[RMDB]
RNA sequence: GGGAACGACUCGAGUAGAGUCGAAAAGAAAAGUGGGAAAUAAAAGGCUCGCUAGAACCAGGGUGGAUCGAACUGGUGAUCGAACUCAACUGACACCACUGUUGAGUGUGCCACACGAAAAAGAAAAGGGAUCAUUUAUGUUCGCAUAAAUGAUCCCAAAAGAAACAACAACAACAAC
Reactivity to DMS in 0.01 (KOAc 150mM, MgCl2 10mM, bicine 150mM(pH8.5), 24C), signal-to-noise 2, nucleotides 027 to 126: g000a100a060a070a030g020u020g010g010g000a050a030a050u010a090a110a100a120g000g000c050u040c030g020c000u010a060g010a130a050c040c050a110g000g000g050u000g000g000a060u000c030g030a080a070c090u010g000g000u000g010a040u010c030g000a000a090c000u000c020a070a060c000u020g010a150c070a080c080c070a090c090u000g040u000u000g000a080g000u000g020u020g030c000c020a000c050a080c080g010a050a040a040a070a150g020a030a050a090a120
Reactivity to 2A3 in 0.01 (KOAc 150mM, MgCl2 10mM, bicine 150mM(pH8.5), 24C), signal-to-noise 3, nucleotides 027 to 126: g080a030a070a000a000g090u110g000g060g040a090a100a040u200a050a130a100a070g050g030c020u010c020g020c070u050a030g000a090a010c020c000a000g030g000g040u200g060g070a070u090c040g010a050a050c060u030g000g050u060g080a130u070c020g040a010a010c000u000c020a000a000c000u070g030a020c060a040c130c070a060c050u000g000u010u010g000a020g020u090g070u080g020c000c000a070c000a020c060g140a110a010a070a000a010g100a030a040a050a030